[RMDB]
RNA sequence: GGGAACGACUCGAGUAGAGUCGAAAAACUCCGGCACUACGGUGCCGGAGACACGGGGGGAGGUGGUCCCUCAGCCCAGUUUGUGAGAGGGUGCAGGCCAGGCUGAGGGACUCCACCAGUGCACAAAGCGUUUCCUACCAUUCGUGGUAGGAAACGCAAAAGAAACAACAACAACAAC
Reactivity to 2A3 in 0.01 (KOAc 150mM, MgCl2 10mM, bicine 150mM(pH8.5), 24C), signal-to-noise 1, nucleotides 027 to 126: a010c020u000c000c000g000g010c000a000c010u080a090c160g040g010u000g080c000c000g000g000a000g000a000c000a020c010g220g000g000g060g060g010a050g010g090u150g110g020u050c000c000c000u010c000a000g000c000c000c000a030g000u030u090u030g010u000g090a300g050a080g070g120g050u100g000c000a000g020g000c030c000a000g000g000c000u010g010a000g010g000g000a000c000u000c000c000a030c000c000a000g000u040g000c010a000c220a100a150a010
This 177-nucleotide RNA was probed chemically with 2A3.
Values are in units of 0.01, from 0 to 300, in steps of 10.
For 2A3, 800 sequencing reads were counted.